[RMDB]
RNA sequence: GGGAACGACUCGAGUAGAGUCGAAAAAUUGUAACGCCAGUGUCCAGUGGCCAUGGUUCUGUUGACCUGAUCAUACCUGGUGUACAUAAGGCCAAUGGUAUUAAAUUACUCCAGAAUAUAUGGGGUGCAUAGUAUCACUUUUCGAAGUGAUACUAUGAAAAGAAACAACAACAACAAC
Reactivity to DMS in 0.01 (KOAc 150mM, MgCl2 10mM, bicine 150mM(pH8.5), 24C), signal-to-noise 9, nucleotides 027 to 126: a090u010u000g010u010a060a070c040g010c000c010a010g010u010g010u010c240c160a120g020u000g010g010c050c020a030u020g020g010u000u000c120u010g030u000u020g010a030c010c010u000g000a040u000c050a040u000a060c040c010u000g010g010u000g010u000a030c050a040u000a090a100g010g010c020c020a090a100u010g020g010u000a080u000u010a050a090a110u010u010a020c010u000c020c010a030g010a160a120u010a110u010a080u000g010g000g000g010u000g020
Reactivity to 2A3 in 0.01 (KOAc 150mM, MgCl2 10mM, bicine 150mM(pH8.5), 24C), signal-to-noise 9, nucleotides 027 to 126: a000u100u050g020u020a170a040c030g010c020c000a020g020u040g030u230c090c070a050g040u020g010g000c000c030a080u150g010g040u130u090c090u160g280u210u300g030a020c000c000u010g000a030u030c010a020u030a060c000c010u010g000g000u020g010u010a010c010a020u100a030a070g090g040c030c000a030a070u120g080g020u110a110u110u220a140a120a060u090u060a010c000u000c000c000a040g140a300a050u190a020u030a040u170g000g000g010g000u000g000

Conditions: 150 mM KOAc, 10 mM MgCl2 and 150 mM bicine (pH 8.5), 24 C. An RNA of 177 nucleotides, treated with DMS and 2A3 and read out base by base. DMS adducts were read by reverse transcription with MarathonRT. DMS (dimethyl sulfate) methylates the pairing face of unpaired adenines and cytosines.